[RMDB]
RNA sequence: GGGAACGACUCGAGUAGAGUCGAAAACGUCGGCGCCGCCGUGCUGCUGCUCAUCUUGAUGGCCGUUGCAAUCAGCGUCUUCGUGCGUCGGCGGCGGCGCGAGCGGCUGGCCGGCAGCGCUGAGCUGGUGACUCAUAAUCUUCGGAUUAUGAGUCACAAAAGAAACAACAACAACAAC
Reactivity to DMS in 0.01 (KOAc 150mM, MgCl2 10mM, bicine 150mM(pH8.5), 24C), signal-to-noise 2, nucleotides 027 to 126: c110g000u000c010g010g030c020g010c010c030g030c010c010g020u000g010c000u020g010c000u000g020c030u020c150a130u010c140u000u010g010a070u000g020g000c030c070g010u000u010g020c090a150a120u010c110a120g020c020g020u000c010u000u010c170g010u030g010c080g030u010c180g000g000c000g010g030c000g000g000c010g030c080g000a090g010c000g000g000c020u000g010g020c000c010g010g030c000a030g000c030g010c080u000g010a080g020c060u000g010
Reactivity to 2A3 in 0.01 (KOAc 150mM, MgCl2 10mM, bicine 150mM(pH8.5), 24C), signal-to-noise 2, nucleotides 027 to 126: c050g040u010c010g000g020c010g010c000c000g000c000c010g010u090g000c010u010g000c000u020g010c010u010c080a250u080c130u160u240g070a140u130g170g000c050c020g030u020u050g040c080a140a210u150c050a160g030c020g080u010c010u140u060c070g140u200g060c040g030u070c050g020g010c000g010g000c010g000g010c000g000c000g020a010g000c010g000g010c010u010g010g010c000c000g010g000c020a000g010c020g000c020u050g020a010g010c050u070g110